[RMDB]
RNA sequence: GGGAACGACUCGAGUAGAGUCGAAAACGUCUGGUGGCGCUGGCCGGGACUACAACUCAAGCCGUCGGAUACGCCGUGCAGGAUUCGGCGGACGGUGACGCGCUGCGUCAAAGAUCGGUGAUUGGCGUUGCUGCUAUCAGUUCGCUGAUAGCAGCAAAAAAGAAACAACAACAACAAC
Reactivity to 2A3 in 0.01 (KOAc 150mM, MgCl2 10mM, bicine 150mM(pH8.5), 24C), signal-to-noise 3, nucleotides 027 to 126: c040g010u010c020u050g070g030u040g010g020c010g030c050u030g060g000c000c050g010g010g070a060c050u130a060c090a130a010c050u070c100a080a020g020c030c010g010u000c000g050g030a060u070a180c070g010c020c020g010u080g040c080a080g050g130a040u070u030c020g000g030c000g000g020a020c010g020g000u030g040a000c020g010c010g000c040u060g000c010g010u050c010a020a050a020g050a050u070c030g020g040u030g000a110u030u070g040g000c000g010
Reactivity to DMS in 0.01 (KOAc 150mM, MgCl2 10mM, bicine 150mM(pH8.5), 24C), signal-to-noise 3, nucleotides 027 to 126: c050g000u020c020u000g000g030u020g010g000c030g000c070u010g010g020c030c040g020g040g010a100c080u000a060c240a110a090c190u020c070a130a140g010c010c000g020u010c000g010g000a090u000a140c090g000c050c070g010u020g010c130a190g000g000a130u000u000c000g000g010c000g000g000a040c040g020g000u000g000a040c120g000c060g010c130u000g000c070g020u000c040a080a090a060g000a110u020c070g020g000u010g000a090u010u000g030g000c080g010